[RMDB]
RNA sequence: GGGAACGACUCGAGUAGAGUCGAAAAGCAUAAUUUGUAGGUUGAUGGUAACCCCCUUUCCUUGCUGGUUGAUAAUCUGGAACAAACUUCUACUUAAACCUUGAAGCUUUGUGUAUAGGAUCAAGGGACUAACGCUCACAUUCGUGUGAGCGUUAGUAAAAGAAACAACAACAACAAC
Reactivity to DMS in 0.01 (KOAc 150mM, MgCl2 10mM, bicine 150mM(pH8.5), 24C), signal-to-noise 1, nucleotides 027 to 126: g010c140a050u000a090a070u000u010u000g020u000a080g000g000u010u000g000a130u010g000g010u030a120a050c050c000c010c020c010u000u000u000c000c000u000u000g020c110u000g000g020u010u010g000a100u010a030a060u010c060u010g000g000a120a050c030a020a020a050c050u000u000c040u000a030c070u000u010a070a060a120c170c170u020u000g020a050a080g010c220u000u000u020g030u000g000u020a120u000a020g000g000a060u000c090a040a030g010g010g020